[RMDB]
RNA sequence: GGGAACGACUCGAGUAGAGUCGAAAAACAGAAAAAAGGAGUUUAAAUUAGAUUUGCAAACGGACGGUACUAAAUACCGUCACCUUUACGUCUAACUUAUCGUUAACUCUGCAAAAAGAAAACAAGAAAAACAAGCGUGAGUUCGCUCACGCUUGAAGCUAAAAGUCAGGUUCGCCUGACUUUUAGCAAAAGAAACAACAACAACAAC
Reactivity to 2A3 in 0.01 (KOAc 150mM, MgCl2 10mM, bicine 150mM(pH8.5), 24C), signal-to-noise 1, nucleotides 027 to 156: a000c020a040g050a000a130a000a050a020a040g020g000a020g010u070u070u130a030a050a080u000u010a020g120a060u040u070u260g080c030a050a050a050c050g040g000a020c010g000g010u020a040c010u220a150a040a080u050a010c000c000g020u020c020a120c000c000u060u040u080a020c000g000u000c000u010a050a050c040u050u020a050u190c010g070u000u020a000a020c000u000c000u020g030c070a000a110a090a000a000g040a040a050a060a020c040a050a040g200a100a020a080a020a030c000a010a000g000c000g000u000g010a000g060u050u080c150g070c050u010c000a000c000g000c010u000u000g010a000a000
Chemical mapping of a 207-nucleotide RNA with 2A3. 2A3 adducts were read by reverse transcription with SuperScript II with manganese. It was measured as part of the RMDB library M2RFOK. The reactions ran in a buffer of 150 mM KOAc, 10 mM MgCl2 and 150 mM bicine (pH 8.5), at 24 C.